[RMDB]
RNA sequence: GGGAACGACUCGAGUAGAGUCGAAAAUACAACCGGGUGCGGUAGCGCGGCCACGGCGCGUACUGCGCGGUUGGCCUCUUCGACGAUGGCGGUCGGCGGCCCUCCGCCCCACACAUCGUCCACAGACGACCUUGACGUCUUUCGAGACGUCAAGGUCAAAAGAAACAACAACAACAAC
Reactivity to DMS in 0.01 (KOAc 150mM, MgCl2 10mM, bicine 150mM(pH8.5), 24C), signal-to-noise 1, nucleotides 027 to 126: u000a230c050a020a080c030c000g020g020g020u000g010c010g000g000u020a040g010c020g030c020g010g020c100c060a050c070g040g000c000g000c000g030u000a030c000u000g010c020g000c020g000g000u040u020g000g010c010c020u010c030u000u000c300g000a010c040g010a040u010g000g000c070g000g020u000c110g010g000c010g000g000c130c130c300u010c010c010g000c000c000c000c030a000c050a200c020a020u000c010g000u000c010c230a100c160a030g020a120c110
Reactivity to 2A3 in 0.01 (KOAc 150mM, MgCl2 10mM, bicine 150mM(pH8.5), 24C), signal-to-noise 1, nucleotides 027 to 126: u150a000c000a020a020c020c020g090g150g180u150g020c000g000g030u060a020g120c000g000c010g060g070c100c030a100c100g100g000c000g020c010g050u030a040c030u050g000c040g010c000g010g000u000u020g010g010c040c000u000c070u100u150c030g020a010c000g000a010u020g010g000c010g010g040u140c090g010g000c010g010g000c040c010c040u150c030c000g000c000c010c010c010a050c010a010c000a030u000c000g010u010c010c010a090c010a010g080a020c050
Conditions: 150 mM KOAc, 10 mM MgCl2 and 150 mM bicine (pH 8.5), 24 C. The record gives the reactivity of an RNA of 177 nucleotides to DMS and 2A3. 2A3 adducts were read by reverse transcription with SuperScript II with manganese. Reactivities are rounded to 0.1 and cut off at 0 and 3.